Source information: An RNA of 207 nucleotides, treated with DMS and 2A3 and read out base by base. DMS adducts were read by reverse transcription with MarathonRT.
RNA sequence: GGGAACGACUCGAGUAGAGUCGAAAACCUCGAUUCGUCGAGGACAGGGGUCAACGCGAGCAGAGGCAUAGACAUGAGCUGAAGCCUCCACGGCUCAACAGCUAUGCUACCCACCUGCUCCGUUGACGGAGGCACCCUUUGCUAGGCUUCGGCCUAGAGACUAUUCUCUGUUCGCAGAGAAUAGUCUAAAAGAAACAACAACAACAAC
Reactivity to DMS in 0.01 (KOAc 150mM, MgCl2 10mM, bicine 150mM(pH8.5), 24C), signal-to-noise 2, nucleotides 027 to 156: c020c010u000c010g000a080u000u000c240g070u000c000g010a070g030g020a110c100a070g010g050g050g000u020c030a030a020c030g020c230g000a030g020c010a040g020a190g000g020c010a030u000a030g020a040c040a300u020g000a060g040c010u000g010a110a090g020c000c000u000c020c000a300c080g040g000c130u000c000a080a100c080a110g030c030u020a020u000g000c030u000a030c010c020c060a300c080c030u000g000c000u000c000c010g040u000u010g010a050c000g000g020a040g030g030c060a070c020c010c010u000u000u000g020c020u000a060g020g010c010u010u010c300g040g000c010c010u000a040g000
Reactivity to 2A3 in 0.01 (KOAc 150mM, MgCl2 10mM, bicine 150mM(pH8.5), 24C), signal-to-noise 5, nucleotides 027 to 156: c010c000u000c000g010a030u030u040c180g030u000c010g090a020g000g010a020c090a150g190g040g130g000u010c010a010a000c010g080c180g020a000g000c010a000g010a020g000g020c000a000u000a000g050a070c160a250u300g000a010g000c010u020g000a090a020g020c000c000u020c000c000a020c010g010g000c000u000c010a040a070c050a040g160c000u000a010u020g000c000u060a090c080c050c030a060c020c010u010g000c000u010c000c000g000u000u000g000a000c010g000g010a000g000g000c000a040c020c010c000u080u170u190g060c010u000a000g000g000c010u040u080c270g150g000c000c000u010a000g000